[RMDB]
RNA sequence: GGGAACGACUCGAGUAGAGUCGAAAAAGUAGCCCAGUCAAGAGAGGAUGGUGACUUGGACUUGUAGUAGAGCCAGUUAGAAUGAAAGAAAUUGACACAUUCAGAAAUGGUUUUAGAGAUAGAGUCAAACUGGACCUGAUAAAGAACUAGAGAAGCAUGAUAAAUUACCUUUCGAGGUAAUUUAUCAAAAAGAAACAACAACAACAAC
Reactivity to 2A3 in 0.01 (KOAc 150mM, MgCl2 10mM, bicine 150mM(pH8.5), 24C), signal-to-noise 2, nucleotides 027 to 156: a000g080u050a000g030c030c000c000a010g090u080c070a100a020g040a010g010a030g090g000a050u050g030g020u030g020a020c030u060u040g040g000a030c030u030u050g040u060a090g040u040a020g010a000g040c030c010a000g000u020u020a040g020a020a050u060g030a040a080a090g040a050a140a030u090u100g030a030c020a000c030a110u060u050c000a010g100a060a140a050u030g000g030u050u010u010u070a030g000a000g010a020u030a080g040a010g010u040c010a020a040a030c030u030g000g010a040c010c010u000g010a010u040a070a110a020g020a050a010c060u090a030g040a000g010a080a000g120c020a030
Reactivity to DMS in 0.01 (KOAc 150mM, MgCl2 10mM, bicine 150mM(pH8.5), 24C), signal-to-noise 3, nucleotides 027 to 156: a100g010u010a150g020c010c000c010a160g010u030c060a110a100g000a140g000a080g010g000a080u000g000g010u000g020a090c030u000u010g030g000a070c040u000u000g020u020a100g020u000a110g010a080g000c030c010a080g030u000u000a110g020a060a080u000g010a080a090a150g010a080a070a130u000u000g000a140c070a140c060a070u010u000c010a130g010a080a090a090u000g010g000u000u000u000u000a100g010a140g040a070u000a070g020a160g000u000c000a040a040a080c050u010g010g010a040c020c020u010g020a100u010a040a030a100g020a060a090c030u000a060g020a110g000a080a050g040c040a090